[RMDB]
RNA sequence: GGGAACGACUCGAGUAGAGUCGAAAAACAUAUGUGCAUAUGGACAUACAUGCACAUGUUCAUAUAAAUACGUAUGCUUGUAUACUUGUGGCGUAUGCACGGAUAAAUGCAUAUGCCUUAACCUGUAGGUAAAAUAGCACUUCGGUGCUAUUUUACCAAAAGAAACAACAACAACAAC
Reactivity to 2A3 in 0.01 (KOAc 150mM, MgCl2 10mM, bicine 150mM(pH8.5), 24C), signal-to-noise 4, nucleotides 027 to 126: a000c030a000u040a000u010g030u040g030c010a000u010a000u020g010g010a010c010a030u070a050c040a090u190g130c120a110c010a050u010g000u030u000c000a000u040a000u010a030a210a030u220a020c030g010u020a000u000g030c100u130u100g140u120a080u040a130c070u080u190g080u090g100g000c010g000u000a000u000g030c020a020c050g090g060a230u300a170a090a020u030g000c000a000u000a010u010g000c010c000u000u010a010a030c000c010u030g080u110a060
Reactivity to DMS in 0.01 (KOAc 150mM, MgCl2 10mM, bicine 150mM(pH8.5), 24C), signal-to-noise 2, nucleotides 027 to 126: a060c000a010u000a000u010g000u000g030c260a000u000a000u000g000g010a000c020a010u000a120c240a130u020g000c110a070c110a030u020g000u000u000c000a000u000a030u000a090a150a040u020a020c030g000u000a000u000g010c100u000u000g010u010a090u010a150c180u000u000g020u000g020g000c000g020u000a020u000g000c010a010c150g010g010a100u070a100a110a280u010g000c000a000u000a000u010g000c040c000u000u050a020a090c090c010u000g000u010a150
Structure probing data (2A3 and DMS) for a 177-nucleotide construct. For 2A3 the reverse transcriptase was SuperScript II with manganese.